[RMDB]
Record summary
Structure probing data (DMS and 2A3) for a 177-nucleotide construct.

RNA sequence: GGGAACGACUCGAGUAGAGUCGAAAAUCUGCAGAACCUCAGUGCCGGCAACUGGAUGGUGAGGGACCAGGUCGGGCAGGGUGGGCAAGUCCUGAGAGAGGGAAUCCCAGGCACCUCACUGGUGCAGACGUCUUACCCUGUUCGCAGGGUAAGACGUAAAAGAAACAACAACAACAAC
Reactivity to DMS in 0.01 (KOAc 150mM, MgCl2 10mM, bicine 150mM(pH8.5), 24C), signal-to-noise 1, nucleotides 027 to 126: u010c020u000g000c020a050g050a260a130c010c030u000c090a070g090u000g030c000c020g000g000c090a120a280c060u010g000g000a040u000g020g000u000g000a050g010g000g030a150c100c120a070g020g020u000c070g000g000g000c050a100g010g000g030u020g000g020g000c300a090a040g010u000c030c000u000g020a060g030a170g000a080g000g000g020a140a090u000c000c000c020a110g000g000c040a010c000c000u000c130a070c140u000g000g010u000g000c000a200g000
Reactivity to 2A3 in 0.01 (KOAc 150mM, MgCl2 10mM, bicine 150mM(pH8.5), 24C), signal-to-noise 1, nucleotides 027 to 126: u030c010u030g020c010a060g000a110a120c020c030u030c030a050g050u020g060c050c010g040g000c080a120a040c140u020g040g060a080u130g050g060u020g030a100g000g000g020a030c010c010a000g050g140u130c040g040g000g080c070a110g050g010g120u200g010g080g010c130a130a010g010u020c000c030u050g010a020g040a000g000a000g070g020g030a040a040u070c020c000c000a050g100g000c000a020c010c000u030c010a090c150u070g000g000u000g000c010a020g040